[RMDB]
RNA sequence: GGGAACGACUCGAGUAGAGUCGAAAACAGACCAAGUUCGCUUGGUCUGAAAGAAAGCGGAAAGCACCAGGGAGGGAAGGAGCGGGCCGCAACCACCCAUAAAAAGUACGAUCUUCGGAUCGUACAAGGCACAGAUACUCUUCGGAGUAUCUGUGCCAAAAGAAACAACAACAACAAC
Reactivity to 2A3 in 0.01 (KOAc 150mM, MgCl2 10mM, bicine 150mM(pH8.5), 24C), signal-to-noise 1, nucleotides 027 to 126: c000a000g000a000c000c000a000a000g020u010u090c120g010c170u000u000g000g020u020c010u000g000a000a020a000g090a030a030a000g000c000g010g040a120a020a010g080c040a010c100c010a020g000g040g070a140g060g030g050a080a170g050g030a070g040c020g000g000g000c020c010g050c010a000a000c020c020a040c020c010c020a060u130a050a140a000a030a000g000u000a000c000g000a000u000c010u040u080c230g140g010a020u000c000g000u000a000c010a000a030